[RMDB]
RNA sequence: GGGAACGACUCGAGUAGAGUCGAAAACGCCUACCGGCGUGCGAUCGCCGCCAAAUCAGACCUCGAGCGCCAGGAGAGCGGGGAAAAGACCGGCGUCUUCUUGGGCAGCUACGCCAUCAACCCGGCCUCGAUCGUAUGCGUUCGCGCAUACGAUCGAAAAAGAAACAACAACAACAAC
Reactivity to 2A3 in 0.01 (KOAc 150mM, MgCl2 10mM, bicine 150mM(pH8.5), 24C), signal-to-noise 1, nucleotides 027 to 126: c030g040c000c010u010a130c000c050g010g000c010g020u050g090c030g060a140u190c060g000c000c050g050c040c000a000a140a000u110c010a030g070a100c000c000u040c060g040a020g000c010g050c020c030a020g000g020a020g010a000g000c000g010g000g000g000a040a000a000a110g070a010c020c020g110g040c000g230u040c000u050u000c000u020u100g000g000g040c030a000g090c000u010a020c050g060c030c000a070u060c030a040a070c000c000c000g110g040c020c050
An RNA of 177 nucleotides, treated with 2A3 and read out base by base.
Reactivities are given for positions 27 through 126.